[RMDB]
RNA sequence: GGGAACGACUCGAGUAGAGUCGAAAAAGAUAUGGAUCCAAGGGAGCUUGUAAACAGGCAAUGAUGUAGAAUCGGAAACGAUUCUAUUGAGCCUGGAAGAAGAGCGAGGAUCUUGGAUCCUAAGUCACAUUCACUUUGAGUUCGCUCAAAGUGAAUGAAAAGAAACAACAACAACAAC
Reactivity to DMS in 0.01 (KOAc 150mM, MgCl2 10mM, bicine 150mM(pH8.5), 24C), signal-to-noise 5, nucleotides 027 to 126: a080g020a050u000a300u010g000g010a000u010c000c000a020a020g000g010g010a040g020c010u000u000g010u000a000a150a300c000a000g010g000c000a260a140u000g000a070u000g010u000a010g000a010a000u000c000g010g010a100a060a090c000g010a020u000u000c000u000a000u000u000g000a150g020c000c000u020g000g010a010a070g010a250a300g000a030g000c000g000a080g020g000a050u000c010u020u000g010g000a010u000c000c000u000a000a040g020u000c030a150
Reactivity to 2A3 in 0.01 (KOAc 150mM, MgCl2 10mM, bicine 150mM(pH8.5), 24C), signal-to-noise 2, nucleotides 027 to 126: a000g090a050u120a060u130g010g000a000u000c010c000a010a000g000g000g000a040g020c000u000u050g020u000a000a000a010c010a000g030g000c030a110a300u190g060a020u100g030u020a010g000a010a000u000c010g030g020a030a080a020c020g010a000u000u020c000u020a010u000u030g010a000g000c020c000u000g010g000a050a100g010a010a000g000a000g000c030g040a150g020g000a010u030c020u000u000g000g000a000u060c000c000u010a210a010g020u010c000a010